[RMDB]
RNA sequence: GGGAACGACUCGAGUAGAGUCGAAAAGAUAUGGAAUCUGGAUGGGACAACAGCGUGUCAAUCGGAAACGAUUGCACGACAUGUCCCGCCAGAUUCCUAAGUCAAAGACUCGUGUUCGCACGAGUCACCCAUGCUUCACGUUCGCGUGAAGCAUGGGAAAAGAAACAACAACAACAAC
Reactivity to 2A3 in 0.01 (KOAc 150mM, MgCl2 10mM, bicine 150mM(pH8.5), 24C), signal-to-noise 2, nucleotides 027 to 126: g000a030u050a010u210g010g000a000a000u000c000u010g000g150a300u160g120g060g000a000c010a200a020c070a190g130c000g030u050g250u300c080a010a000u000c010g030g030a070a030a110c030g000a010u000u000g050c000a000c030g010a020c010a020u070g020u000c000c000c000g030c060c000a000g000a000u010u000c010c000u000a010a000g010u010c030a140a080a000g000a010c000u010c020g020u010g090u030u110c300g000c050a010c000g000a010g040u000c010a000
Reactivity to DMS in 0.01 (KOAc 150mM, MgCl2 10mM, bicine 150mM(pH8.5), 24C), signal-to-noise 1, nucleotides 027 to 126: g020a040u000a300u050g000g000a000a000u000c000u000g000g000a090u000g060g000g030a010c000a050a060c290a300g000c000g020u000g000u030c050a020a000u000c000g000g000a110a110a140c030g010a000u000u000g010c000a000c000g040a000c160a100u000g010u010c000c000c050g020c000c000a000g000a000u030u030c000c020u000a010a060g000u010c010a120a100a140g000a010c000u000c000g000u000g000u000u000c300g010c000a000c000g010a010g000u000c000a020
An RNA of 177 nucleotides, treated with 2A3 and DMS and read out base by base. For 2A3, 2,901 sequencing reads were counted. The RNA was probed in 150 mM KOAc, 10 mM MgCl2 and 150 mM bicine (pH 8.5) at 24 C. DMS adducts were read by reverse transcription with MarathonRT. Source: RMDB library TTRDES, as collected in RNAgym.